[RMDB]
RNA sequence: GGGAACGACUCGAGUAGAGUCGAAAAAGGCAAGAGUAAAGAAAACGCAUUAAUCAAGCGUAGUAUAAGGUGGCAUGCGAUUAUGCAAACAUCGAGGUCCUGGAAAAACCGAUGUAAAAUAAAUAACUUGUUAUGGUUGGUUCGCCAACCAUAACAAAAAAGAAACAACAACAACAAC
Reactivity to 2A3 in 0.01 (KOAc 150mM, MgCl2 10mM, bicine 150mM(pH8.5), 24C), signal-to-noise 1, nucleotides 027 to 126: a000g130g000c140a130a000g040a030g190u110a030a100a000g060a000a000a010a000c000g000c070a030u160u200a150a020u210c080a060a060g000c030g070u070a000g000u000a050u000a040a150g120g020u000g030g000c060a090u010g010c000g160a160u170u130a020u190g000c020a060a060a060c010a040u020c050g110a200g020g050u020c000c010u060g070g120a000a160a000a000a000c000c000g050a000u000g060u130a000a070a000a140u090a010a100a000u050a000a000c040
Reactivity to DMS in 0.01 (KOAc 150mM, MgCl2 10mM, bicine 150mM(pH8.5), 24C), signal-to-noise 2, nucleotides 027 to 126: a010g000g000c090a060a010g010a100g000u020a060a140a100g000a130a020a190a020c030g000c040a070u000u020a090a110u000c210a110a070g000c050g050u000a110g020u000a130u030a080a120g000g000u020g000g050c100a070u000g030c070g000a110u010u030a050u010g040c110a040a070a130c050a050u020c010g000a070g020g000u020c050c000u000g000g000a140a130a090a010a010c050c020g000a020u000g010u010a000a030a020a050u050a060a060a060u050a090a130c070
This 177-nucleotide RNA was probed chemically with 2A3 and DMS. It was measured as part of the RMDB library RFM100. The RNA was probed in 150 mM KOAc, 10 mM MgCl2 and 150 mM bicine (pH 8.5) at 24 C. DMS adducts were read by reverse transcription with MarathonRT. The DMS profile rests on 1,721 reads.